[RMDB]
RNA sequence: GGGAACGACUCGAGUAGAGUCGAAAAAACAGACAAGCACAAAGUAAUCAACCCCAAAACAACGGGAGGAGCAGACAACGAGUCCCUAGAUUCGUUUGAUCUAGAUGAAAUUCCAAAUAGCUCGGACCAGUUCAGUAGUGUUCGCACUACUGAACUGAAAAGAAACAACAACAACAAC
Reactivity to DMS in 0.01 (KOAc 150mM, MgCl2 10mM, bicine 150mM(pH8.5), 24C), signal-to-noise 1, nucleotides 027 to 126: a040a050c080a080g020a100c050a100a130g000c030a030c080a040a070a070g000u000a060a110u050c060a120a170c000c010c000c010a110a020a120a100c120a100a110c150g000g000g020a160g000g000a080g010c060a030g000a010c050a060a030c040g030a020g000u000c030c260c150u010a070g000a060u000u000c090g010u000u040u000g020a050u000c000u000a090g010a100u010g010a020a080a130u000u000c050c010a020a010a100u020a080g000c030u000c000g000g000a260c170